[RMDB]
An RNA of 177 nucleotides, treated with 2A3 and DMS and read out base by base. Source: RMDB library OK1LIB, as collected in RNAgym. Reactivities are given for positions 27 through 126.

RNA sequence: GGGAACGACUCGAGUAGAGUCGAAAAGACCUUAGGAUUUGUCCGAAAAGCAUGACAAAGUCGGAUCUAGGCUAAGGAAGGAUGGGCGAAUAAUCUUUUGUCAUGCUUAGAUUUUAAAUCCAUCCAAGAUUGUAUAGUAUUUCGAUACUGUGCAAUCAAAAGAAACAACAACAACAAC
Reactivity to 2A3 in 0.01 (KOAc 150mM, MgCl2 10mM, bicine 150mM(pH8.5), 24C), signal-to-noise 7, nucleotides 027 to 126: g040a040c000c000u000u030a020g010g010a040u040u010u140g030u000c000c000g010a030a020a010a020g000c000a000u000g000a010c000a010a150a020g090u050c010g000g000a020u020c020u060a060g060g000c010u020a010a020g040g010a040a060g010g000a010u010g000g000g000c020g030a070a020u130a050a010u010c000u000u030u010u020g000u000c000a000u000g000c000u010u010a000g000a000u000u000u000u040a010a010a000u000c000c000a000u000c010c000a010a010
Reactivity to DMS in 0.01 (KOAc 150mM, MgCl2 10mM, bicine 150mM(pH8.5), 24C), signal-to-noise 9, nucleotides 027 to 126: g010a160c010c000u000u010a030g000g000a100u020u020u020g000u000c020c020g000a090a090a070a050g020c000a000u000g000a020c010a080a060a110g010u020c030g000g000a040u010c130u010a060g010g010c020u010a030a030g010g010a200a100g010g000a010u000g000g000g000c050g000a110a040u040a030a020u000c020u000u000u010u010g000u000c010a000u000g000c000u010u010a050g000a030u000u010u010u010a040a210a200u010c000c010a020u000c010c010a080a160
The DMS profile rests on 45,363 reads. 2A3 adducts were read by reverse transcription with SuperScript II with manganese.